An RNA of 177 nucleotides, treated with 2A3 and DMS and read out base by base. 2A3 adducts were read by reverse transcription with SuperScript II with manganese. The reactions ran in a buffer of 150 mM KOAc, 10 mM MgCl2 and 150 mM bicine (pH 8.5), at 24 C. For DMS the reverse transcriptase was MarathonRT.
RNA sequence: GGGAACGACUCGAGUAGAGUCGAAAACCCUGAGAACCUCUGUCGCCUCAGAUCAGAACCGUCGUCGCGUUUCGGGCUACAGCCUGUUGCUGGACUCUGUGAGACACCUGACCGACCGCUGAGCGACGAAGGAACUUAUCUUCGGAUAAGUUCCUUCAAAAGAAACAACAACAACAAC
Reactivity to 2A3 in 0.01 (KOAc 150mM, MgCl2 10mM, bicine 150mM(pH8.5), 24C), signal-to-noise 9, nucleotides 027 to 126: c010c000c000u010g110a110g030a060a050c020c030u070c040u060g030u030c020g060c040c040u020c020a030g010a130u100c030a040g080a120a060c060c030g070u090c020g020u010c010g030c040g060u030u070u060c040g010g020g000c030u060a040c020a020g040c010c050u190g040u150u150g040c070u070g010g020a050c020u010c020u120g080u060g100a030g010a040c020a050c030c010u030g030a040c010c040g030a010c000c010g000c030u030g030a010g020c010g030a020c030
Reactivity to DMS in 0.01 (KOAc 150mM, MgCl2 10mM, bicine 150mM(pH8.5), 24C), signal-to-noise 6, nucleotides 027 to 126: c020c000c000u010g000a150g030a110a130c090c050u000c050u020g030u010c030g010c060c030u020c020a050g000a090u020c090a060g000a100a130c140c140g020u000c020g020u010c030g020c090g010u000u020u010c060g000g000g010c010u020a140c060a060g020c050c150u030g010u000u020g030c040u010g010g010a140c100u010c020u010g010u000g010a080g000a070c070a080c080c060u020g000a080c050c020g010a080c090c080g000c030u000g000a090g000c000g000a040c070